[RMDB]
RNA sequence: GGGAACGACUCGAGUAGAGUCGAAAACAGGCGGUUAGCAGUAUCACUGUUCCAGCCUAUUACUUAUUUCCAAUUGACUACCUCAUUGGUCUUGGGUAUAGGUUUGUGUGCGUUCCUGACUUUGCUCGCACAUCCCUAAGUUCGCUUAGGGAUGUGCAAAAGAAACAACAACAACAAC
Reactivity to 2A3 in 0.01 (KOAc 150mM, MgCl2 10mM, bicine 150mM(pH8.5), 24C), signal-to-noise 1, nucleotides 027 to 126: c010a000g090g000c060g040g110u070u140a000g040c040a010g070u120a030u240c080a010c000u020g010u000u000c020c010a010g000c000c000u000a020u020u120a000c000u020u020a010u020u000u000c010c000a000a020u100u130g010a020c030u050a060c070c060u070c010a040u050u010g020g030u010c010u010u010g020g000g040u030a030u010a010g070g000u010u150u090g120u020g030u020g020c030g030u010u020c000c000u000g080a050c060u090u020u060g040c050u030c030
Reactivity to DMS in 0.01 (KOAc 150mM, MgCl2 10mM, bicine 150mM(pH8.5), 24C), signal-to-noise 1, nucleotides 027 to 126: c070a000g010g010c110g030g010u000u010a080g020c010a040g010u010a080u020c120a080c000u000g000u000u000c070c020a100g010c000c000u000a040u010u000a030c010u000u000a050u000u000u000c000c000a030a040u000u000g020a030c120u000a120c230c230u020c040a040u000u010g000g000u000c010u000u000g000g000g020u000a040u000a050g010g010u000u020u000g060u020g010u000g000c030g000u000u010c010c020u000g000a060c060u000u010u000g000c050u000c200

Conditions: 150 mM KOAc, 10 mM MgCl2 and 150 mM bicine (pH 8.5), 24 C. The record gives the reactivity of an RNA of 177 nucleotides to 2A3 and DMS. Reactivities are given for positions 27 through 126. The data come from the RNA Mapping Database (RMDB), library 15KREP.